[RMDB]
Chemical mapping of a 207-nucleotide RNA with DMS and 2A3. The data come from the RNA Mapping Database (RMDB), library OK3TST. For DMS the reverse transcriptase was MarathonRT.

RNA sequence: GGGAACGACUCGAGUAGAGUCGAAAACAUGGAUGUGUUUAACAUUAGUAUGAUGUUCUACACAUUGAACAGUGAUAAACCGCUGUUAAGUAUCGGCCUCACAAAGCACAAUUCAAUUAGCUUUGACGGCUACACAAUUGUUUGCGGUAGCGAACUGUCGGAACUAGGUAUUCGUACCUAGUUCCGAAAAAGAAACAACAACAACAAC
Reactivity to DMS in 0.01 (KOAc 150mM, MgCl2 10mM, bicine 150mM(pH8.5), 24C), signal-to-noise 2, nucleotides 027 to 156: c100a140u010g030g010a010u000g060u000g010u010u000u000a000a040c000a050u000u000a190g000u000a080u000g040a060u010g000u010u000c030u000a000c000a000c000a000u000u000g030a050a100c000a030g050u010g020a130u000a110a080a120c080c010g050c010u000g020u000u000a060a200g000u000a110u000c020g040g000c010c000u000c060a120c040a080a000a040g060c020a180c180a080a120u000u000c150a080a100u000u000a100g000c000u000u000u000g000a140c090g040g060c000u000a060c100a040c060a070a130u010u000g000u000u000u010g030c020g000g050u010a100g020c030g020a060a120c070u000g000
Reactivity to 2A3 in 0.01 (KOAc 150mM, MgCl2 10mM, bicine 150mM(pH8.5), 24C), signal-to-noise 4, nucleotides 027 to 156: c030a050u150g190g000a000u000g010u000g010u000u010u000a010a010c000a000u040u040a130g240u220a220u300g050a000u010g020u000u000c000u010a010c000a000c000a000u010u030g030a040a010c010a010g000u030g030a030u100a170a120a010c030c010g000c020u000g040u080u070a140a030g040u050a090u240c120g020g000c000c000u070c020a100c030a060a020a030g060c030a030c050a130a080u200u180c050a050a070u150u110a110g000c000u020u000u100g020a090c060g010g000c000u050a010c040a000c000a090a200u190u110g070u100u080u130g030c020g030g030u050a030g040c030g080a030a030c000u040g030